[RMDB]
RNA sequence: GGGAACGACUCGAGUAGAGUCGAAAACCCUGUCAUGAGGCCGAAACGAAGGCACGUACCCCUUCGAAUGGCGUCGGGGAGUCAACGGCUAUAUAUGCGCCUAAUGCUGGCAUCCGGGAACGAGCGUAUUAGACAGUAAUCUUCGGAUUACUGUCAAGUACCUCUUGUGAUUCGUCACAAGAGGUACAAAAGAAACAACAACAACAAC
Reactivity to DMS in 0.01 (KOAc 150mM, MgCl2 10mM, bicine 150mM(pH8.5), 24C), signal-to-noise 2, nucleotides 027 to 156: c000c020c020u020g020u060c090a020u000g010a120g000g030c060c020g020a140a130a210c030g000a070a080g000g020c020a070c090g020u000a140c030c010c000c000u000u000c020g020a140a150u000g040g010c040g000u000c070g040g000g000g030a120g010u020c020a080a120c040g000g000c020u000a080u040a070u000a030u010g010c020g020c030c020u010a120a150u010g030c040u000g020g020c010a100u030c060c020g000g000g020a130a080c050g010a120g000c030g030u000a080u000u000a170g010a010c020a010g000u010a010a020u000c000u000u000c300g030g000a030u010u000a000c000u000g040u000c000a030a140
Reactivity to 2A3 in 0.01 (KOAc 150mM, MgCl2 10mM, bicine 150mM(pH8.5), 24C), signal-to-noise 4, nucleotides 027 to 156: c010c000c020u020g120u090c080a090u130g080a050g040g050c020c030g090a090a120a030c060g020a060a040g010g000c040a010c010g110u110a080c000c020c010c000u020u000c030g060a160a140u220g050g040c020g080u030c030g010g010g010g010a020g030u030c040a010a100c010g000g000c030u000a000u000a000u010a020u300g050c050g010c010c030u120a150a050u160g050c050u030g020g000c010a060u030c030c060g050g000g010a070a040c040g010a030g050c080g010u050a080u090u070a120g000a000c020a000g000u000a000a000u010c000u010u030c140g050g000a010u000u010a000c000u000g010u010c000a010a000